The record gives the reactivity of an RNA of 177 nucleotides to 2A3 and DMS.
[RMDB]
RNA sequence: GGGAACGACUCGAGUAGAGUCGAAAAGAUAUGGACUAUGGACGAAGCUGGGUGAUAUCGGAAACGAUGUUUGCCCAGAACUACUUCGCAUAGUCCUAAGUCAAACGCGUUACUUCGGUAACGCGAAGUGUUACCCGAACUUCGGUUCGGGUAACACAAAAGAAACAACAACAACAAC
Reactivity to 2A3 in 0.01 (KOAc 150mM, MgCl2 10mM, bicine 150mM(pH8.5), 24C), signal-to-noise 1, nucleotides 027 to 126: g050a020u020a070u090g010g000a010c000u010a000u030g080g080a100c000g000a000a000g060c000u010g000g000g060u020g040a010u010a020u000c000g020g010a080a040a060c000g000a000u010g090u050u080u300g020c000c010c000a010g000a010a000c020u130a030c000u010u000c010g000c040a010u000a000g020u000c010c030u000a010a000g030u030c030a030a100a070c010g010c000g020u000u000a000c000u030u090c300g120g000u020a000a000c040g030c000g010a070a040
Reactivity to DMS in 0.01 (KOAc 150mM, MgCl2 10mM, bicine 150mM(pH8.5), 24C), signal-to-noise 1, nucleotides 027 to 126: g000a090u000a300u010g010g000a030c000u000a000u000g030g010a240c020g010a030a020g010c000u000g000g010g000u000g000a000u010a010u020c000g000g000a110a120a160c000g020a000u000g000u000u000u010g020c000c000c000a000g010a000a020c050u010a300c010u000u000c000g020c010a030u010a000g000u010c000c000u000a000a030g000u000c010a080a070a290c010g050c000g020u000u000a010c000u000u000c180g000g010u010a020a030c020g000c000g010a010a010

2A3 adducts were read by reverse transcription with SuperScript II with manganese. The reactions ran in a buffer of 150 mM KOAc, 10 mM MgCl2 and 150 mM bicine (pH 8.5), at 24 C. Values cover nucleotides 27 to 126. For DMS, 909 sequencing reads were counted.